An RNA of 177 nucleotides, treated with DMS and 2A3 and read out base by base. The 2A3 profile rests on 2,895 reads. The RNA was probed in 150 mM KOAc, 10 mM MgCl2 and 150 mM bicine (pH 8.5) at 24 C. Reactivities are given for positions 27 through 126. It was measured as part of the RMDB library M2PK50.
RNA sequence: GGGAACGACUCGAGUAGAGUCGAAAAGAUCUUAGGUUCGCCUAAGAUCAAAAGAGCUAGCAAGGUUCAGCUAGCAAAGAUCGAAAGAUCAAAUGAACCUAAAAAGGAUAAAGUUCGCUUUAUCCAAUCAUACAGCUUUGUUCGCAAAGCUGUAUGAAAAAGAAACAACAACAACAAC
Reactivity to DMS in 0.01 (KOAc 150mM, MgCl2 10mM, bicine 150mM(pH8.5), 24C), signal-to-noise 2, nucleotides 027 to 126: g000a010u000c000u000u000a010g000g000u000u000c240g030c010c000u000a000a000g000a010u000c010a030a070a120a190g020a190g000c010u000a000g030c000a090a010g010g000u000u010c010a050g050c000u000a020g000c030a040a080a050g000a000u000c000g030a140a090a130g000a020u000c000a010a040a190u000g000a010a000c000c000u000a040a030a060a120a100g000g000a020u000a010a010a010g000u000u010c210g010c000u000u000u000a000u000c000c010a070a060
Reactivity to 2A3 in 0.01 (KOAc 150mM, MgCl2 10mM, bicine 150mM(pH8.5), 24C), signal-to-noise 2, nucleotides 027 to 126: g020a000u010c000u000u000a000g010g020u050u040c190g130c010c010u000a000a010g010a020u000c000a010a000a000a010g050a020g000c000u000a000g000c050a180a050g010g030u020u010c010a000g000c010u000a000g000c010a030a120a010g010a010u000c020g020a020a030a050g000a000u010c000a010a000a000u030g010a010a000c010c020u050a060a070a020a030a070g010g000a000u010a000a010a020g020u050u120c210g090c130u000u000u030a010u000c000c000a000a030